[RMDB]
RNA sequence: GGGAACGACUCGAGUAGAGUCGAAAACAGUGAUGGAAACAUCACUGAAAAACGUGUAAGCGCUACACGAAAAAGUCGAUCGAAUACCGAUCGACAAGCGCUAAAGUCAUGCCGAAAGGCAUGACAACAUGGCGAUACCAUUCGUGGUAUCGCCAUGAAAAGAAACAACAACAACAAC
Reactivity to DMS in 0.01 (KOAc 150mM, MgCl2 10mM, bicine 150mM(pH8.5), 24C), signal-to-noise 3, nucleotides 027 to 126: c000a000g000u000g040a020u020g000g000a250a130a180c030a000u000c000a010c000u000g010a000a060a030a120a140c020g000u010g000u000a110a020g010c000g000c010u020a060c000a010c020g020a010a110a070a040a020g000u000c000g010a020u000c030g020a300a170u040a140c210c010g010a020u010c000g000a000c010a030a020g000c000g020c000u000a080a080a070g000u000c010a000u000g050c000c000g000a090a110a120g000g030c010a000u010g000a000c020a060a110
Reactivity to 2A3 in 0.01 (KOAc 150mM, MgCl2 10mM, bicine 150mM(pH8.5), 24C), signal-to-noise 4, nucleotides 027 to 126: c000a000g000u000g000a000u000g000g010a040a030a030c000a010u000c000a000c000u000g000a030a000a000a010a000c010g000u010g000u020a080a020g000c000g000c000u000a000c010a010c040g270a120a020a020a010a010g000u000c000g000a000u000c000g000a060a040u150a300c140c010g000a000u000c000g000a000c000a000a000g000c000g000c000u000a030a020a000g010u000c000a000u010g000c000c000g020a070a020a000g000g000c010a000u000g000a000c000a000a000
An RNA of 177 nucleotides, treated with DMS and 2A3 and read out base by base. The RNA was probed in 150 mM KOAc, 10 mM MgCl2 and 150 mM bicine (pH 8.5) at 24 C. The DMS profile rests on 4,755 reads. For DMS the reverse transcriptase was MarathonRT.